Structure probing data (2A3 and DMS) for a 177-nucleotide construct. Reactivities are given for positions 27 through 126. For 2A3 the reverse transcriptase was SuperScript II with manganese.
[RMDB]
RNA sequence: GGGAACGACUCGAGUAGAGUCGAAAACUUGCAGAAUGACCGCACAGAUGAGGGUCUGGAUGAAUGCCGUAUAGAAGGAGCCGUGGAUAAAAUAUGUCGCAACCGCAAAGGCAAGCAAUGCACCGAUUACCGGUUUAGGUUUCGACCUAAACCGGUAAAAAGAAACAACAACAACAAC
Reactivity to 2A3 in 0.01 (KOAc 150mM, MgCl2 10mM, bicine 150mM(pH8.5), 24C), signal-to-noise 2, nucleotides 027 to 126: c000u000u040g000c000a000g030a260a040u050g060a150c000c000g090c050a010c000a090g090a140u090g020a210g010g070g000u050c050u050g000g020a030u020g000a100a080u070g040c000c000g030u140a040u090a110g130a140a030g020g070a010g000c000c050g030u080g010g030a020u250a120a080a040a070u100a070u250g100u060c000g020c010a090a070c060c010g030c030a030a010a000g040g000c010a010a010g000c000a100a000u100g000c010a020c010c010g000a010u010
Reactivity to DMS in 0.01 (KOAc 150mM, MgCl2 10mM, bicine 150mM(pH8.5), 24C), signal-to-noise 1, nucleotides 027 to 126: c050u000u000g000c050a050g000a000a010u030g010a050c030c000g050c110a030c100a090g030a050u020g030a150g030g050g080u030c000u010g030g000a040u000g000a050a150u000g010c040c040g000u010a120u030a120g000a080a050g000g000a080g000c050c000g030u000g000g060a100u030a030a000a040a090u030a100u030g000u010c060g000c060a050a000c080c060g020c040a140a040a040g000g030c040a070a060g020c070a120a160u080g000c050a080c010c080g000a080u000